[RMDB]
Chemical mapping of a 177-nucleotide RNA with DMS.
RNA sequence: GGGAACGACUCGAGUAGAGUCGAAAAAGCACCGACGACACCAGGAAGAUCUUCGCCGACGCCGAGCGCAAUAUCGGCAAAUGGUCGUCGACGCUCGCCGCGUCGCUGGCCGGCACGCCGCAUGCGAAGCUAGCGUACCCUUCGGGGUACGCUAGCUAAAAGAAACAACAACAACAAC
Reactivity to DMS in 0.01 (KOAc 150mM, MgCl2 10mM, bicine 150mM(pH8.5), 24C), signal-to-noise 1, nucleotides 027 to 126: a040g020c030a090c050c000g080a130c030g040a090c020a050c070c070a060g010g000a090a050g000a070u010c020u000u010c020g070c020c030g000a040c150g030c000c010g030a060g010c000g000c090a080a100u020a050u000c010g010g100c010a030a030a090u010g030g010u000c030g020u000c010g040a030c010g000c030u000c230g080c120c150g010c000g010u010c010g030c090u020g000g000c000c010g050g010c300a150c090g000c000c020g000c110a080u020g010c030g000a080
Reactivities are given for positions 27 through 126. It was measured as part of the RMDB library OK2TRN. Reactivities are rounded to 0.1 and cut off at 0 and 3. DMS (dimethyl sulfate) methylates the pairing face of unpaired adenines and cytosines.